Structure probing data (DMS and 2A3) for a 207-nucleotide construct.
DMS adducts were read by reverse transcription with MarathonRT.
The DMS profile rests on 1,689 reads.
[RMDB]
RNA sequence: GGGAACGACUCGAGUAGAGUCGAAAAGCCCUUUCGAGGGCCGAAAAGCGUACUACUUUGCUUUUGACGAUCGAGUUACUACCCACCUGGUCCCAAAUAGGACCAGAGGUAACGAGAUCGAUAAGCAAAGUAUCGCGAGGAGCCAAUUCGUUGGCAAUCUGAUCAGUCUUUUCGAAGACUGAUCAGAAAAAGAAACAACAACAACAAC
Reactivity to DMS in 0.01 (KOAc 150mM, MgCl2 10mM, bicine 150mM(pH8.5), 24C), signal-to-noise 1, nucleotides 027 to 156: g070c000c000c010u000u000u000c190g040a060g020g000g040c000c000g000a010a040a090a090g100c030g000u010a110c090u040a010c000u000u000u000g030c010u000u000u050u000g080a140c060g010a020u030c010g020a300g000u000u000a030c000u000a080c010c000c020a300c210c000u000g010g000u010c000c000c000a050a150a290u000a060g000g050a020c000c010a000g000a040g040g030u000a020a000c000g010a300g000a000u000c040g040a100u000a020a060g060c000a020a030a000g020u000a010u000c090g010c040g010a060g000g010a140g000c000c000a020a140u000u060c170g070u000u030g000g020c020a050a130
Reactivity to 2A3 in 0.01 (KOAc 150mM, MgCl2 10mM, bicine 150mM(pH8.5), 24C), signal-to-noise 2, nucleotides 027 to 156: g000c000c020c000u000u040u010c220g060a070g000g010g060c040c030g060a100a070a010a000g030c030g040u040a150c050u000a010c000u080u000u000g000c000u060u080u080u210g270a110c060g000a000u010c000g000a010g080u030u010a000c000u100a070c040c050c010a030c000c000u000g000g000u040c000c010c050a210a240a100u300a180g000g010a000c000c000a000g000a000g000g010u000a000a000c000g000a000g000a070u010c000g000a030u040a020a000g000c000a000a000a010g010u010a040u230c010g000c000g000a020g020g040a030g000c030c000a040a020u200u160c240g050u040u010g040g000c010a020a080